[RMDB]
RNA sequence: GGGAACGACUCGAGUAGAGUCGAAAAGAGACUGCUGAUGCUGUAGAUGAUACUAUAUUAUUCAAGUCUUGAUUAUCUGCUGUGAGUUUUCAUGAAUAAUUCACCUUUUUCAUGCACGACACAGAACUUGUUGGUAACAGCACUCCAGUGUCGAACACACUACGCAUGCUUUCGAGCAUGCGUAGUGAAAAGAAACAACAACAACAAC
Reactivity to 2A3 in 0.01 (KOAc 150mM, MgCl2 10mM, bicine 150mM(pH8.5), 24C), signal-to-noise 1, nucleotides 027 to 156: g050a010g010a040c060u030g010c020u050g020a180u030g130c000u000g010u030a100g040a110u160g050a050u070a050c100u050a060u010a000u300u030a060u000u090c050a030a040g020u030c070u080u050g190a130u080u140a070u190c070u120g040c010u000g020u040g010a100g000u070u000u160u130c010a010u020g030a100a020u060a050a050u160u190c110a240c010c000u110u130u110u000u000c010a000u050g030c090a010c080g070a020c020a000c000a010g030a060a010c010u020u070g020u070u030g100g000u080a110a000c000a010g010c010a000c040u020c010c020a020g000u010g060u010c000g070a030a000c060a050